[RMDB]
Chemical mapping of a 177-nucleotide RNA with DMS.
Conditions: 150 mM KOAc, 10 mM MgCl2 and 150 mM bicine (pH 8.5), 24 C.

RNA sequence: GGGAACGACUCGAGUAGAGUCGAAAACACAACUGCGAAGGGGGGACGGAGAAGGCUAUGUUGGCCGGGCGACGGUUGUCCCGGUUUAAGCCUGUAGGCUGGUUUUCCAGGCAAAUCCGGAAUUGAAGUAUACGCUAGUCUUCGGACUAGCGUAUACAAAAGAAACAACAACAACAAC
Reactivity to DMS in 0.01 (KOAc 150mM, MgCl2 10mM, bicine 150mM(pH8.5), 24C), signal-to-noise 3, nucleotides 027 to 126: c080a090c100a080a080c110u000g000c130g000a140a090g000g010g030g000g020g000a080c020g020g000a040g020a090a050g010g010c010u010a080u010g020u020u000g000g010c000c030g020g000g000c300g000a090c120g020g000u000u000g010u000c020c000c010g010g000u000u000u000a060a100g010c010c000u000g010u000a120g000g000c010u000g000g000u010u000u000u010c030c000a060g000g000c020a030a120a100u000c010c020g000g000a060a120u010u000g010a050a150